[RMDB]
RNA sequence: GGGAACGACUCGAGUAGAGUCGAAAAUUUGUGAGGGGGAGGCGUGUCAGUGUAUGCGGAUACAUUAACUUGAAGGGGAGAUCAUAGUGGUGUGGUCCGCCUCUUGUUUUUGGCCAAACCUUGCGAGCUAUAUUAAAAUAUUCGUAUUUUAAUAUAGAAAAGAAACAACAACAACAAC
Reactivity to DMS in 0.01 (KOAc 150mM, MgCl2 10mM, bicine 150mM(pH8.5), 24C), signal-to-noise 2, nucleotides 027 to 126: u000u030u020g010u000g000a060g000g000g020g000g010a300g010g000c060g020u030g000u000c040a030g020u010g000u010a030u010g020c140g010g010a080u010a120c010a010u000u010a040a040c020u000u020g000a070a080g000g000g020g000a120g000a050u010c010a020u010a080g010u010g010g010u000g030u000g000g030u000c030c030g010c010c000u000c010u010u000g000u010u010u020u020u010g040g020c020c020a030a300a160c020c000u010u010g000c050g010a030g010
Reactivity to 2A3 in 0.01 (KOAc 150mM, MgCl2 10mM, bicine 150mM(pH8.5), 24C), signal-to-noise 1, nucleotides 027 to 126: u050u060u100g030u020g020a030g000g020g010g010g000a010g000g000c040g010u060g040u050c030a030g020u030g000u100a050u180g060c000g020g040a010u000a020c020a000u040u050a100a020c020u070u090g070a070a020g030g030g020g000a180g020a050u030c010a010u090a060g100u080g140g070u080g000u000g100g010u000c000c000g070c000c040u010c010u020u030g050u010u080u000u100u120g120g010c010c000a000a020a030c000c000u000u000g010c010g000a000g000